[RMDB]
RNA sequence: GGGAACGACUCGAGUAGAGUCGAAAAGCACAUCAUGCCGGUAUGGCAGGGGCAGGGCUAUAACAGUGGUAUGCGCGACGCCUUUAACCUCGCAUGGAAACUGGCGUUGGUUAUCCAGGGGAAAGCCGUACGUGUGGUAAUUCGUUACCACACGUACAAAAGAAACAACAACAACAAC
Reactivity to 2A3 in 0.01 (KOAc 150mM, MgCl2 10mM, bicine 150mM(pH8.5), 24C), signal-to-noise 3, nucleotides 027 to 126: g020c020a020c000a150u080c010a010u060g000c040c010g140g100u270a150u240g060g010c010a010g040g010g000g000c030a100g020g020g000c020u090a050u020a290a070c070a040g020u050g060g040u110a060u170g070c170g000c010g030a010c010g030c000c000u010u020u050a050a030c000c000u050c130g060c100a090u180g000g030a090a140a020c020u020g030g000c000g000u010u040g020g000u030u050a050u050c010c030a010g000g010g010g040a050a090a030g080c040c020
Reactivity to DMS in 0.01 (KOAc 150mM, MgCl2 10mM, bicine 150mM(pH8.5), 24C), signal-to-noise 4, nucleotides 027 to 126: g030c050a050c100a090u000c080a130u000g010c020c020g030g030u010a060u010g020g010c000a060g020g010g030g020c150a090g000g000g010c070u020a080u000a090a080c150a080g020u000g010g010u010a060u000g000c090g010c020g010a040c060g000c020c010u000u000u000a070a120c010c000u000c300g020c170a090u020g020g000a070a060a050c100u000g000g020c020g030u000u000g010g000u000u000a090u000c030c030a110g000g000g040g000a080a090a070g010c110c140